This 207-nucleotide RNA was probed chemically with 2A3.

[RMDB]
RNA sequence: GGGAACGACUCGAGUAGAGUCGAAAAAGAGUGAUAGGGACGGCCCGUGGCACAUACCAAAUCUUGCUGAAAACCUUUUAGCUCCAUCCUAUAUCUAACGGUGCGUCGGAAUGGCACUGAGACCAAAAGUAGUUAAAGUACUCCCAAGAGGGAUGUGUGCUGGAAAAGUAUUCGUACUUUUCCAGCAAAAAGAAACAACAACAACAAC
Reactivity to 2A3 in 0.01 (KOAc 150mM, MgCl2 10mM, bicine 150mM(pH8.5), 24C), signal-to-noise 1, nucleotides 027 to 156: a000g070a010g020u070g000a110u040a100g040g010g000a020c000g040g000c050c020c020g040u020g000g000c100a000c020a080u160a060c040c010a020a130a140u090c020u060u120g000c000u050g020a000a030a160a210c020c000u000u090u070u020a010g000c010u060c050c000a110u130c030c010u060a060u020a020u120c020u040a100a090c070g000g000u020g060c020g060u010c000g030g080a110a110u110g000g000c000a000c010u080g050a110g050a060c020c050a050a050a050a050g050u100a040g010u030u120a060a000a060g070u070a110c000u000c010c000c000a060a110g040a080g090g070g000a070u000g020u020g000